[RMDB]
RNA sequence: GGGAACGACUCGAGUAGAGUCGAAAAGCGUACUACUUCCGAGGCAAUCGAGGAUAUGAAGCAACUCCCAAAUAGGAGUUGCCAUAUCUACCCACCGAUUGCUCCCCACCGGAAGUAUCGCAAAAGCAACGGUUACACUUCGGUGUAACCGUUGCAAGAUAUACCCUUAGUUCGCUAAGGGUAUAUCAAAAGAAACAACAACAACAAC
Reactivity to 2A3 in 0.01 (KOAc 150mM, MgCl2 10mM, bicine 150mM(pH8.5), 24C), signal-to-noise 5, nucleotides 027 to 156: g010c010g040u090a120c040u000a000c010u030u010c000c000g010a030g000g020c000a000a000u010c010g010a020g020g000a010u000a000u010g120a200a040g000c000a000a010c000u040c020c040c050a180a200a060u300a090g000g000a000g000u000u000g000c000c000a000u000a000u000c010u030a090c070c030c060a050c040c010g000a000u000u000g010c000u060c010c000c010c000a060c010c020g010g080a000a000g010u020a040u300c020g000c000a040a030a030a040g020c000a000a000c000g000g000u000u000a000c000a000c000u070u170c300g100g000u000g000u000a000a000c000c000g000u000u000g000c000a000a000
Reactivity to DMS in 0.01 (KOAc 150mM, MgCl2 10mM, bicine 150mM(pH8.5), 24C), signal-to-noise 3, nucleotides 027 to 156: g020c010g030u000a070c080u000a000c000u010u000c010c000g000a300g050g010c010a020a010u000c000g020a140g000g000a020u000a010u000g010a120a100g030c000a000a020c000u000c010c000c010a030a170a230u010a040g000g000a020g020u010u010g040c010c000a020u000a010u000c010u010a020c010c020c010a300c120c010g010a030u000u010g010c010u000c160c150c030c020a300c160c020g000g000a040a030g000u000a000u000c030g020c020a070a090a100a180g000c000a010a000c000g000g000u010u000a000c000a020c010u000u000c290g060g000u000g040u000a000a010c020c010g000u000u000g020c040a010a010